[RMDB]
RNA sequence: GGGAACGACUCGAGUAGAGUCGAAAAAGAUCCACGCUACGGCGUGGAUUACACGUUCAUCCCUAUUGGGACGGAAGUAGGCAUAGUGCCGAAGGAACGCAUUAGUCAUGCGCUACGGCGCAUGACACACAUCAGAGUCACUUCGGUGACUCUGAAAGUUUACUCAGUAGUUCGCUACUGAGUAAACAAAAGAAACAACAACAACAAC
Reactivity to DMS in 0.01 (KOAc 150mM, MgCl2 10mM, bicine 150mM(pH8.5), 24C), signal-to-noise 2, nucleotides 027 to 156: a150g000a040u000c000c000a000c000g000c000u010a080c300g060g010c000g010u000g000g010a000u000u000a010c090a060c030g010u000u000c030a180u000c000c000c000u000a210u010u000g030g000g000a030c010g000g010a040a080g010u000a130g010g020c020a220u000a120g000u010g000c000c010g010a110a130g070g010a090a090c080g030c050a080u010u000a040g010u010c070a040u000g010c030g070c010u000a090c270g090g040c050g000c000a010u000g000a040c000a050c080a030c080a100u000c000a020g000a010g010u010c010a010c000u000u020c300g000g050u010g010a010c010u000c000u000g000a010a010a070